Structure probing data (2A3) for a 177-nucleotide construct. The 2A3 profile rests on 339 reads.
[RMDB]
RNA sequence: GGGAACGACUCGAGUAGAGUCGAAAACUUGCUAUUGCUGCUUAGCUUCUCUAAAACACUGGGCUACGUUUUUCAACGCUCGAGAGGCAGAGUCUCAAGGAGCCUCCAAUGGGCCUCACGUAUUCAUCGCACCUCCAUUUUUCGAAAUGGAGGUGCGAAAAGAAACAACAACAACAAC
Reactivity to 2A3 in 0.01 (KOAc 150mM, MgCl2 10mM, bicine 150mM(pH8.5), 24C), signal-to-noise 1, nucleotides 027 to 126: c020u030u050g020c000u100a120u240u170g010c000u000g000c000u080u080a020g070c000u000u000c010u050c020u010a140a140a000a000c030a020c020u090g000g070g000c000u000a020c030g010u000u000u060u060u030c060a140a000c030g000c000u000c030g110a010g000a000g100g050c000a000g050a040g100u030c000u010c200a110a120g000g000a020g000c030c070u080c000c040a050a160u130g080g000g000c000c000u070c030a110c140g060u240a300u000u000c030a020u000